[RMDB]
RNA sequence: GGGAACGACUCGAGUAGAGUCGAAAAUACCGCAGGCCUGCGGUGCGGCAGUGUGGAGACCUGCCGAAAGCCGUGUUGUUUUGACAACCGGGAGAAAGCGUAUGCGGAGGCAGCGCUUUCAGGGUCUAAAAGUAUGGGAUCUUCGGAUCCCAUACAACUUCUACUUCACCUUCGGGUGAAGUAGAAGAAAAGAAACAACAACAACAAC
Reactivity to 2A3 in 0.01 (KOAc 150mM, MgCl2 10mM, bicine 150mM(pH8.5), 24C), signal-to-noise 2, nucleotides 027 to 156: u110a000c020c000g000c010a010g030g000c020c050u050g000c000g000g010u010g000c020g010g000c000a000g020u030g010u110g300g070a050g030a080c010c000u030g010c000c000g000a100a020a000g050c020c010g080u080g010u210u010g000u000u090u080u290g050a020c010a040a010c000c000g000g020g000a100g000a010a000a000g000c010g010u040a300u180g010c000g010g080a050g300g000c000a000g000c010g000c000u000u020u000c010a010g000g010g000u020c020u060a060a020a070a030g000u000a000u000g000g010g010a010u000c030u020u040c170g060g000a000u000c000c000c000a000u010a000c000a000a000
Notes: The record gives the reactivity of an RNA of 207 nucleotides to 2A3.